[RMDB]
RNA sequence: GGGAACGACUCGAGUAGAGUCGAAAAAAAGAUAUGGACGAAGUGGAGAAGAUAGCUACGAAGAACAUCUUUCGGAAACGAAAGAUGGGAGUAGUAUACUUCGAUGAAACUUCGUCCUAAGUCAAAACCCAAUUCAUUACUUCGGUAAUGAAUUGGGAAAAGAAACAACAACAACAAC
Reactivity to DMS in 0.01 (KOAc 150mM, MgCl2 10mM, bicine 150mM(pH8.5), 24C), signal-to-noise 1, nucleotides 027 to 126: a080a100a110g020a040u000a200u000g010g000a040c000g020a010a000g020u000g000g010a040g010a010a000g000a110u000a080g000c010u000a000c000g000a080a150g000a120a280c000a010u000c000u010u010u010c000g000g050a030a020a080c020g020a010a000a010g010a000u010g000g000g000a040g010u020a010g000u010a150u010a070c000u000u000c000g020a150u010g000a050a130a040c010u000u000c000g000u000c020c020u000a000a060g000u010c000a060a060a120a090
Reactivity to 2A3 in 0.01 (KOAc 150mM, MgCl2 10mM, bicine 150mM(pH8.5), 24C), signal-to-noise 2, nucleotides 027 to 126: a000a000a000g040a020u060a050u040g000g010a000c010g020a000a010g040u030g070g030a050g000a020a030g060a090u160a090g060c010u000a000c060g300a300a040g000a050a030c000a020u000c030u000u010u000c010g050g000a040a050a020c010g000a000a020a010g000a000u010g000g020g010a010g040u000a010g000u030a200u110a160c000u000u010c020g260a300u020g000a010a020a010c000u010u020c010g000u000c010c010u000a000a000g010u000c010a030a060a030a110